Structure probing data (2A3 and DMS) for a 207-nucleotide construct. The 2A3 profile rests on 1,676 reads. For 2A3 the reverse transcriptase was SuperScript II with manganese. It was measured as part of the RMDB library OK3TST. The reactions ran in a buffer of 150 mM KOAc, 10 mM MgCl2 and 150 mM bicine (pH 8.5), at 24 C. The DMS profile rests on 2,188 reads.

RNA sequence: GGGAACGACUCGAGUAGAGUCGAAAACGCCAAGCCGAACGCGCAGAACGAGGCGCGUGGAUCGUCUCCGACACCUUCACCGCGCCAGGCUCCCGCAACACUUGGAACACUCGUACUCAUGAGGAGUUCUGGCAACGCAACGACACCACAGACUACAUGGAGGAAUAAUCUUCGGAUUAUUCCUCCAAAAAGAAACAACAACAACAAC
Reactivity to 2A3 in 0.01 (KOAc 150mM, MgCl2 10mM, bicine 150mM(pH8.5), 24C), signal-to-noise 2, nucleotides 027 to 156: c030g030c000c030a050a000g000c010c000g080a080a020c010g000c000g010c040a010g020a140a020c070g030a100g040g000c010g000c020g010u070g000g020a110u080c000g050u050c090u010c030c030g070a070c020a050c020c020u050u070c010a030c070c050g030c010g010c020c000a000g010g000c020u000c010c000c000g010c020a020a100c020a080c090u050u110g050g040a140a040c040a010c050u050c050g060u140a060c030u060c090a100u200g030a080g050g000a030g020u130u020c010u010g000g000c000a020a010c050g030c030a060a060c040g040a030c010a010c030c040a030c000a040g070a050c000u120a010c010a150
Reactivity to DMS in 0.01 (KOAc 150mM, MgCl2 10mM, bicine 150mM(pH8.5), 24C), signal-to-noise 1, nucleotides 027 to 156: c080g000c000c010a030a090g030c010c010g000a050a100c050g000c000g030c060a150g000a090a100c040g000a280g040g010c010g000c010g060u030g040g040a060u000c030g000u000c020u010c040c040g020a150c020a020c020c020u000u000c000a080c100c000g020c060g030c020c000a090g040g050c000u000c000c000c010g000c030a090a130c060a000c020u010u000g030g010a090a100c060a070c050u010c050g020u010a090c100u000c130a110u010g040a060g010g000a230g020u000u000c000u000g000g030c040a080a150c000g030c030a070a130c070g080a150c040a110c000c000a070c040a090g020a100c040u010a080c110a210